[RMDB]
RNA sequence: GGGAACGACUCGAGUAGAGUCGAAAAAAAGAUAUGGAAUGCAUGGAGUAGUGGUGAGCUAAGACAGGUGGUCGGAAACGACCACUCGAGCUCACGCACUACUAUGAAGUGCAUUCCUAAGUCAAAACACGUAUACGUGGUUCGCCACGUAUACGUGAAAAGAAACAACAACAACAAC
Reactivity to DMS in 0.01 (KOAc 150mM, MgCl2 10mM, bicine 150mM(pH8.5), 24C), signal-to-noise 3, nucleotides 027 to 126: a030a070a090g010a050u000a300u000g000g000a020a010u000g000c000a030u000g000g000a050g000u000a000g000u010g000g010u000g000a010g010c000u010a160a060g000a180c300a090g000g010u010g000g010u000c000g000g000a100a060a130c010g000a010c000c000a000c000u000c070g010a010g000c020u000c000a000c010g000c000a000c000u000a000c000u000a070u020g000a120a150g000u000g000c000a020u000u010c000c000u010a020a060g010u000c020a100a050a070a160
Reactivity to 2A3 in 0.01 (KOAc 150mM, MgCl2 10mM, bicine 150mM(pH8.5), 24C), signal-to-noise 1, nucleotides 027 to 126: a000a000a020g080a060u110a060u130g010g000a000a010u010g020c020a000u040g050g050a030g000u030a000g000u000g000g000u000g000a020g020c010u090a240a070g200a150c090a050g000g100u010g000g000u010c000g000g030a070a080a040c030g010a000c020c000a000c020u010c010g010a000g000c000u010c020a000c000g130c000a010c000u010a000c010u010a110u030g020a020a020g000u000g000c030a000u000u000c000c000u000a080a000g040u000c050a000a050a070a060